[RMDB]
The data come from the RNA Mapping Database (RMDB), library RFM100. An RNA of 177 nucleotides, treated with 2A3 and DMS and read out base by base. For DMS the reverse transcriptase was MarathonRT. For DMS, 3,698 sequencing reads were counted. The reactions ran in a buffer of 150 mM KOAc, 10 mM MgCl2 and 150 mM bicine (pH 8.5), at 24 C. Values cover nucleotides 27 to 126.
RNA sequence: GGGAACGACUCGAGUAGAGUCGAAAAUUCGAUCCAAUCCAGGAGAGGAAGUGGUAGGAUGCAGCUGCCGGUUCAUGGAUACCUCUGCAGUGCAUGUCGUAGGCUUGCACUUGCAUGGGUUUGCAUGAACAUUUCGCCGAUUCGUCGGCGAAAUGUUAAAAGAAACAACAACAACAAC
Reactivity to 2A3 in 0.01 (KOAc 150mM, MgCl2 10mM, bicine 150mM(pH8.5), 24C), signal-to-noise 2, nucleotides 027 to 126: u090u040c010g010a020u060c020c010a020a080u070c010c030a010g020g110a100g050a080g010g000a060a070g090u070g060g020u010a000g010g090a100u070g070c030a030g000c000u030g030c020c000g030g050u020u030c000a000u000g110g060a030u110a080c000c000u000c010u010g000c000a000g010u010g000c000a000u020g040u120c080g130u130a150g040g050c000u000u010g000c000a000c000u070u140g000c010a000u020g000g000g000u030u000u070g050c030a000u000g020
Reactivity to DMS in 0.01 (KOAc 150mM, MgCl2 10mM, bicine 150mM(pH8.5), 24C), signal-to-noise 2, nucleotides 027 to 126: u010u000c010g000a090u010c000c030a110a090u030c140c100a160g000g020a050g000a140g000g020a050a050g020u010g000g000u000a090g020g010a070u000g020c090a080g000c030u000g000c040c070g020g030u000u020c000a020u010g000g000a010u010a000c000c000u000c160u010g000c010a000g000u000g000c000a000u000g030u000c010g030u090a090g010g010c000u000u000g010c030a000c000u030u020g000c000a010u010g010g000g000u010u010u030g020c000a010u000g000